The record gives the reactivity of an RNA of 177 nucleotides to 2A3. Conditions: 150 mM KOAc, 10 mM MgCl2 and 150 mM bicine (pH 8.5), 24 C. Values cover nucleotides 27 to 126. Source: RMDB library OK1LIB, as collected in RNAgym. 2A3 adducts were read by reverse transcription with SuperScript II with manganese.

RNA sequence: GGGAACGACUCGAGUAGAGUCGAAAAGUGCACACCAAUUUGACCUCAGCGGACCAAAGCCCUCGGUCCCAAGGGCUCACUAGGGCAAGGAGCCUUAAUGUCAAGGUUAAGGAGUCGCCGGGUUCAGCCCGACCCGGUACUUCGGUACCGGGUCGGGAAAAGAAACAACAACAACAAC
Reactivity to 2A3 in 0.01 (KOAc 150mM, MgCl2 10mM, bicine 150mM(pH8.5), 24C), signal-to-noise 1, nucleotides 027 to 126: g080u170g000c000a000c000a040c150c020a050a020u090u000u190g100a060c010c010u070c030a000g150c040g080g000a020c060c000a000a000a120g000c000c000c000u040c100g070g110u050c020c000c000a010a040g000g000g000c000u000c000a140c000u020a020g030g030g000c010a010a140g120g000a020g100c000c000u000u060a120a130u170g150u060c090a030a020g120g050u010u040a060a090g010g060a020g060u090c000g000c130c030g140g000g000u100u030c000a000g010